This 177-nucleotide RNA was probed chemically with 2A3 and DMS.
Source: RMDB libraries RFM100 and RFMREP, as collected in RNAgym.

RNA sequence: GGGAACGACUCGAGUAGAGUCGAAAAGAGAACCAAAGGUCGGGACCCAUCUUGAGUUGGAGUCAAAGUUUCGUACUUGUCUGGCCUUUGGACCCCCUCUUCCUUGGUCUUCACUCCUGGCCUAGUCGAAUUGUCUAGGGUUCGCCCUAGACAAUUCAAAAGAAACAACAACAACAAC
Reactivity to 2A3 in 0.01 (KOAc 150mM, MgCl2 10mM, bicine 150mM(pH8.5), 24C), signal-to-noise 7, nucleotides 027 to 126: g020a000g020a030a030c000c000a000a000a000g000g000u010c000g020g000g010a010c000c010c010a020u050c050u170u300g180a300g090u050u010g040g020a170g050u030c040a070a000a010g030u030u070u210c260g040u140a030c010u030u030g030u040c010u010g000g000c010c000u010u000u000g000g000a010c020c010c000c000c000u020c030u050u020c020c000u010u060g040g000u040c010u030u080c040a030c050u030c000c030u030g010g040c010c010u030a050g040u080c090
Reactivity to DMS in 0.01 (KOAc 150mM, MgCl2 10mM, bicine 150mM(pH8.5), 24C), signal-to-noise 3, nucleotides 027 to 126: g010a080g020a090a110c000c000a000a010a010g000g010u000c000g000g000g010a030c000c010c010a020u010c050u020u040g010a140g000u000u010g000g000a120g010u000c060a010a010a000g000u000u020u030c220g000u050a020c010u000u000g010u030c010u000g020g010c000c000u000u020u000g010g000a160c010c060c080c030c020u010c030u000u010c020c000u000u000g000g010u010c020u000u000c040a060c040u010c030c000u020g000g000c030c020u000a070g020u010c130
DMS adducts were read by reverse transcription with MarathonRT. Reactivities are given for positions 27 through 126.